[RMDB]
The record gives the reactivity of an RNA of 177 nucleotides to DMS. The reactions ran in a buffer of 150 mM KOAc, 10 mM MgCl2 and 150 mM bicine (pH 8.5), at 24 C. It was measured as part of the RMDB library OK2TST.
RNA sequence: GGGAACGACUCGAGUAGAGUCGAAAAGGCUGCCGCUGCCUCCCUCCAGGCCACGCCGCAUUCGCAUCCACCUUUCCUGGCACUGCCCACCCACCCGAUCAUAAUUGUGCCCUGCUCGCUGAUCCGAUAUGAGGGAGCUAUUCGUAGCUCCCUCAUAAAAAGAAACAACAACAACAAC
Reactivity to DMS in 0.01 (KOAc 150mM, MgCl2 10mM, bicine 150mM(pH8.5), 24C), signal-to-noise 2, nucleotides 027 to 126: g010g000c020u000g010c060c120g010c030u000g020c040c030u000c050c010c020u010c030c090a150g010g020c080c030a100c100g000c000c040g010c070a090u000u000c080g010c020a110u000c050c040a060c060c050u000u000u010c010c010u030g010g010c050a050c070u000g010c000c020c020a120c040c040c010a100c090c020c010g000a070u010c060a090u010a080a100u000u010g000u010g020c020c030c010u000g000c020u000c020g030c040u000g010a100u000c030c030g000a150